[RMDB]
RNA sequence: GGGAACGACUCGAGUAGAGUCGAAAAGCCAUGUGACUUUUGUCGCAUGGCGACGACGUAGUUUUCUACGUCGGAGAGUCGUCUACCUUUGGCCCCGGUAGGCCUCUCUGCCGAACAGGACUUUUGUCGUGUGAGGUAGUGAGUGAUUUGGGCAUCAAAUAUGGACUAAUUUCGAUUAGUCCAUAUUAAAAGAAACAACAACAACAAC
Reactivity to DMS in 0.01 (KOAc 150mM, MgCl2 10mM, bicine 150mM(pH8.5), 24C), signal-to-noise 4, nucleotides 027 to 156: g010c000c000a010u000g020u000g010a020c000u000u000u000u000g020u000c010g030c000a010u010g010g020c000g000a010c020g010a020c010g030u000a010g020u010u000u000u000c030u000a010c000g010u000c000g000g000a160g010a090g020u000c030g010u000c010u010a110c010c000u000u000u000g020g010c040c010c020c300g000g010u000a070g020g010c040c010u000c020u000c020u000g020c010c010g010a300a040c010a040g010g000a040c010u000u000u010u020g020u000c000g000u000g010u020g010a300g020g020u000a030g010u000g000a070g020u000g010a200u000u010u010g010g010g050c040a120u000c060a100
Reactivity to 2A3 in 0.01 (KOAc 150mM, MgCl2 10mM, bicine 150mM(pH8.5), 24C), signal-to-noise 9, nucleotides 027 to 156: g000c000c000a010u000g010u000g000a000c040u080u140u300u300g000u000c010g000c010a000u000g000g010c000g000a010c000g000a000c000g000u030a030g010u050u150u210u270c010u010a000c000g000u010c000g020g040a070g000a000g110u140c050g000u000c010u010a010c010c000u020u020u070g050g000c010c010c000c000g000g000u000a000g010g010c000c000u000c000u000c000u000g000c000c000g000a010a000c000a010g060g050a000c020u150u200u260u300g020u010c190g140u000g000u010g020a010g010g000u000a000g000u010g000a000g010u060g110a130u140u170u220g000g000g000c010a030u140c020a020